[RMDB]
Record summary: An RNA of 177 nucleotides, treated with 2A3 and DMS and read out base by base. For 2A3 the reverse transcriptase was SuperScript II with manganese. The reactions ran in a buffer of 150 mM KOAc, 10 mM MgCl2 and 150 mM bicine (pH 8.5), at 24 C.
RNA sequence: GGGAACGACUCGAGUAGAGUCGAAAAUUGCCGCAGACGCGGUUUGUUCUGCGUAAAGCGCUGGCCGCCCAUUUGCCGGUGAUUCUGGUGGUCAACAAGACAGACCGGCCCGACGCCCGCAUCGCCGUCAUCAGAGCUAGUUCGCUAGCUCUGAUGAAAAAGAAACAACAACAACAAC
Reactivity to 2A3 in 0.01 (KOAc 150mM, MgCl2 10mM, bicine 150mM(pH8.5), 24C), signal-to-noise 2, nucleotides 027 to 126: u060u030g020c020c010g000c020a020g030a130c070g050c030g010g150u070u050u140g050u050u050c060u130g000c010g050u110a090a120a120g070c010g020c040u040g040g000c000c030g090c000c000c000a050u090u090u050g070c060c000g000g000u050g050a100u130u010c020u100g050g000u050g020g040u030c010a040a040c050a170a150g120a010c010a020g100a060c020c070g070g050c000c020c010g020a060c060g000c000c000c000g030c020a010u030c020g050c000c000g060
Reactivity to DMS in 0.01 (KOAc 150mM, MgCl2 10mM, bicine 150mM(pH8.5), 24C), signal-to-noise 3, nucleotides 027 to 126: u000u000g020c060c020g010c040a100g030a050c060g020c090g010g010u000u000u000g010u010u000c030u000g000c030g000u010a080a120a170g020c050g010c010u010g010g000c030c100g020c020c010c070a150u000u000u010g020c050c040g020g020u000g020a050u000u010c050u000g020g000u000g010g020u010c030a100a090c150a100a070g000a080c120a100g010a070c020c010g000g000c020c050c030g000a070c080g000c030c000c080g000c080a050u000c080g000c020c040g010
Source information
For DMS, 2,772 sequencing reads were counted.